RNA sequence: GGGAACGACUCGAGUAGAGUCGAAAAUUAAAGAAUUGUCGUUGGGAUGCUACGCAAUUAAAUACAUGUGUGACGUGUAUUUGCGAACGACGUAAUUCAAUAGCAGAAAGAUCAAAAGAACAAAAAAUGGGUAAUAUUACUUCGGUAAUAUUACCCAAAAAGAAACAACAACAACAAC
Reactivity to DMS in 0.01 (KOAc 150mM, MgCl2 10mM, bicine 150mM(pH8.5), 24C), signal-to-noise 1, nucleotides 027 to 126: u000u000a100a090a180g000a020a020u010u000g000u000c010g020u000u010g010g030g000a110u000g020c090u000a150c050g000c040a020a110u000u000a060a020a030u000a000c000a000u000g010u000g040u020g040a040c030g030u000g000u000a000u000u000u000g020c040g000a010a040c010g000a050c030g000u000a010a030u000u000c010a050a100u010a040g040c090a040g000a080a060a060g010a100u010c060a060a020a050a070g000a030a030c070a030a050a060a040a050a090